Source: RMDB library M2PK90, as collected in RNAgym.
The record gives the reactivity of an RNA of 177 nucleotides to 2A3 and DMS.
The DMS profile rests on 1,996 reads.
Values cover nucleotides 27 to 126.
DMS adducts were read by reverse transcription with MarathonRT.
RNA sequence: GGGAACGACUCGAGUAGAGUCGAAAAUAACGGACUAGGAAACUCGAUCUUUUAAGUGGAAAUCCUAGCGAAUCCACGGCGAGGAAACUAGGACACUAACCAUGUGAUCCCGGACGCUAGAAGAAAAUAAUCAGGGAGUAUUCGUACUCCCUGAUUAAAAAGAAACAACAACAACAAC
Reactivity to 2A3 in 0.01 (KOAc 150mM, MgCl2 10mM, bicine 150mM(pH8.5), 24C), signal-to-noise 2, nucleotides 027 to 126: u070a020a030c030g030g030a050c020u020a010g000g050a060a190a010c010u000c010g050a170u060c170u130u300u050u080a300a070g000u010g010g020a070a110a000u020c000c020u000a010g010c020g000a000a000u030c000c000a000c010g020g040c000g040a000g010g010a030a190a020c000u010a000g010g020a010c020a010c040u060a060a040c020c050a020u120g040u030g090a050u000c000c000c000g050g060a020c030g000c020u020a000g030a140a000g040a040a160a040a060
Reactivity to DMS in 0.01 (KOAc 150mM, MgCl2 10mM, bicine 150mM(pH8.5), 24C), signal-to-noise 3, nucleotides 027 to 126: u010a100a080c100g000g010a130c010u000a030g000g000a140a100a200c010u000c010g020a170u010c050u000u010u000u010a090a100g020u000g000g000a020a060a120u010c090c020u000a010g020c040g010a200a120u000c000c000a020c010g000g020c010g010a030g010g000a090a060a120c010u000a010g000g010a060c050a030c080u000a080a190c090c120a100u010g060u000g000a070u000c030c000c010g010g000a120c030g030c020u000a040g000a260a110g020a070a070a070a100